[RMDB]
Structure probing data (2A3) for a 207-nucleotide construct.
RNA sequence: GGGAACGACUCGAGUAGAGUCGAAAACUCCUUUCUACGAAGCUAUCAUAGGAAGCUUGCUACAUGUAACUGAUCAAAAAGGAAAUGAAAAUAAUUCGCGCACUUCCGGCUAUGAGACUCUCGGUACAUUAAUUACAUUCAGUUCCGACUCAGUCUAGUGGAUACUCACUUUCGAGUGAGUAUCCACAAAAGAAACAACAACAACAAC
Reactivity to 2A3 in 0.01 (KOAc 150mM, MgCl2 10mM, bicine 150mM(pH8.5), 24C), signal-to-noise 2, nucleotides 027 to 156: c040u020c000c000u060u170u000c050u070a100c070g090a050a000g000c010u030a070u300c040a120u170a100g030g010a040a000g010c040u070u180g010c000u030a040c020a040u100g070u110a210a050c000u040g120a180u240c150a000a060a080a020a050g080g020a110a030a010u120g040a060a090a080a060u200a010a130u130u080c090g030c040g000c040a010c040u060u010c050c000g020g030c030u000a010u160g040a000g000a050c000u010c000u000c070g010g000u020a000c020a040u150u190a140a080u090u160a120c150a100u110u080c000a040g020u030u000c000c000g020a010c010u010c180a020g010u000c010u040a060